Structure probing data (2A3) for a 207-nucleotide construct. The RNA was probed in 150 mM KOAc, 10 mM MgCl2 and 150 mM bicine (pH 8.5) at 24 C. The 2A3 profile rests on 1,230 reads.
RNA sequence: GGGAACGACUCGAGUAGAGUCGAAAACUUCCUCGAUUCGGACCGGCUCAUCUCGACAAGAGGCGGCAGUCCUCAGUGCUCUUACUCUUUUCUGUAAAGAGGAGACUGCUGGACUCGCCGCCCCAGUUCGAGCAUGGGCCAGCUUCCGAACGAGGAUCUGUUUGAUUACCUUCGGGUAAUCAAACAGAAAAGAAACAACAACAACAAC
Reactivity to 2A3 in 0.01 (KOAc 150mM, MgCl2 10mM, bicine 150mM(pH8.5), 24C), signal-to-noise 2, nucleotides 027 to 156: c010u030u060c010c010u010c010g240a300u000u010c020g010g000a010c010c070g000g030c010u010c020a000u000c000u000c000g010a010c000a070a220g090a080g040g010c000g010g000c000a000g010u000c010c010u000c010a100g030u180g270c020u000c010u130u240a260c000u030c000u000u090u090u120c200u300g290u300a020a010a000g000a000g010g000a000g030a000c000u010g070c030u030g000g000a000c000u040c100g000c000c000g000c000c000c000c000a010g000u020u060c000g000a000g020c040a010u010g000g000g010c020c000a000g000c000u050u000c000c000g000a000a000c000g000a000g000g000a010u000